[RMDB]
RNA sequence: GGGAACGACUCGAGUAGAGUCGAAAACGACAUGGCUUCGGCCAUGUCGAAAGGACGAGUGAGACCGAAACGGAGGUAGGUCCAACUACCUUCUCACUGAAAAAAUCCGUUUGUUCGCAAACGGAAAUCAUUAGAUCUACUUCGGUAGAUCUAAUGAAAAAGAAACAACAACAACAAC
Reactivity to DMS in 0.01 (KOAc 150mM, MgCl2 10mM, bicine 150mM(pH8.5), 24C), signal-to-noise 7, nucleotides 027 to 126: c010g010a000c000a000u000g000g000c000u000u010c200g050g010c000c000a000u010g000u000c000g000a020a050a080g010g010a070c130g010a020g010u000g010a020g020a180c100c030g010a070a090a110c180g000g000a030g000g000u000a000g000g000u010c170c160a100a230c010u000a000c000c000u000u000c000u000c020a020c030u010g000a000a020a090a080a100a110u000c000c000g000u000u000u000g010u000u010c170g010c000a010a000a010c000g000g000a010a030a050
Reactivity to 2A3 in 0.01 (KOAc 150mM, MgCl2 10mM, bicine 150mM(pH8.5), 24C), signal-to-noise 6, nucleotides 027 to 126: c010g000a000c000a000u000g000g020c010u070u030c210g070g000c000c000a000u000g000u000c000g000a000a000a000g040g020a020c090g040a020g030u030g010a020g010a050c040c080g090a160a160a020c130g080g020a020g000g000u010a000g020g030u050c060c020a080a110c000u010a010c010c000u070u020c010u010c000a040c040u080g090a090a100a010a000a000a060u020c000c000g000u000u000u010g020u030u050c230g010c110a000a000a000c000g000g000a050a010a040